[RMDB]
RNA sequence: GGGAACGACUCGAGUAGAGUCGAAAACAACACCAAUGCCAGAGCGGUAGCGGUAUGUCACGUUGUGACUGCGGACGGAGUGGUUCAGCAUGUCGAGAAAGGGAACCACUGCUACUUUGGGUGGUUGCAUUAUAGGGGCUUUCGAGCCCCUAUAAUGAAAAGAAACAACAACAACAAC
Reactivity to 2A3 in 0.01 (KOAc 150mM, MgCl2 10mM, bicine 150mM(pH8.5), 24C), signal-to-noise 3, nucleotides 027 to 126: c020a000a020c020a010c000c030a050a060u150g200c030c020a040g010a000g080c070g040g000u010a010g040c060g070g020u050a110u220g110u020c020a030c220g230u200u250g030u080g070a010c010u000g010c010g040g000a040c020g070g130a120g040u150g030g030u060u020c020a030g020c080a090u200g100u140c100g050a060g080a170a030a030g040g010g000a000a000c010c000a000c010u020g020c010u020a050c000u060u030u030g060g020g000u020g070g020u020u100g000
Reactivity to DMS in 0.01 (KOAc 150mM, MgCl2 10mM, bicine 150mM(pH8.5), 24C), signal-to-noise 4, nucleotides 027 to 126: c060a100a150c110a070c030c020a050a080u000g000c010c020a050g000a040g020c040g000g010u000a020g020c080g010g020u000a040u010g010u010c020a050c070g010u020u010g020u010g010a030c000u000g000c040g010g010a060c060g030g000a120g020u010g000g010u000u000c010a090g020c050a040u010g020u000c060g000a110g020a070a110a100g000g010g010a040a020c010c010a010c010u000g010c020u000a040c040u000u000u000g010g010g000u000g010g000u010u000g020